Structure probing data (2A3 and DMS) for a 207-nucleotide construct.
The reactions ran in a buffer of 150 mM KOAc, 10 mM MgCl2 and 150 mM bicine (pH 8.5), at 24 C.
The DMS profile rests on 6,081 reads.
Values are in units of 0.01, from 0 to 300, in steps of 10.
Reactivities are given for positions 27 through 156.
For 2A3 the reverse transcriptase was SuperScript II with manganese.

RNA sequence: GGGAACGACUCGAGUAGAGUCGAAAAGUGUACACGAGAUCGUGAUCGUGUACGUGUGUUCGUACGAGAGAUCACGUGAUCGAGUGAACGUACUCGAGUGAACGAGUACACGUACGUGAACGAACGAGAGAACACUCGAGAUCUCACGAGAGAACGAUCCUUGACAUAGAUUCGUCUAUGUCAAGGAAAAAGAAACAACAACAACAAC
Reactivity to 2A3 in 0.01 (KOAc 150mM, MgCl2 10mM, bicine 150mM(pH8.5), 24C), signal-to-noise 5, nucleotides 027 to 156: g080u050g010u050a000c010a000c050g040a020g010a120u040c010g040u020g040a070u010c020g020u010g010u050a010c010g010u020g020u020g020u010u040c020g020u120a040c010g010a010g000a010g000a160u080c060a010c040g020u070g050a100u120c070g050a060g050u170g080a070a020c050g000u040a040c000u000c000g010a040g080u160g050a110a050c010g000a010g000u010a010c030a000c020g030u020a010c000g000u010g030a060a020c050g020a020a010c020g020a010g010a010g010a140a000c030a010c010u020c000g040a070g010a100u020c040u010c050a030c010g040a040g000a010g060a090a020c020g080a030
Reactivity to DMS in 0.01 (KOAc 150mM, MgCl2 10mM, bicine 150mM(pH8.5), 24C), signal-to-noise 3, nucleotides 027 to 156: g000u000g020u000a070c000a090c000g000a110g040a120u000c030g040u000g000a080u000c010g070u000g020u000a000c000g020u010g010u010g000u000u000c030g070u000a130c040g010a240g010a260g010a090u000c020a060c010g030u000g010a190u000c020g010a110g020u020g000a110a130c100g050u000a040c000u000c000g020a270g030u000g000a140a090c020g000a090g010u000a020c010a080c070g010u010a050c040g030u000g040a090a120c020g000a010a170c030g020a270g000a180g000a090a180c060a030c010u000c020g000a150g010a110u000c070u000c010a050c030g010a200g030a120g000a050a050c080g000a180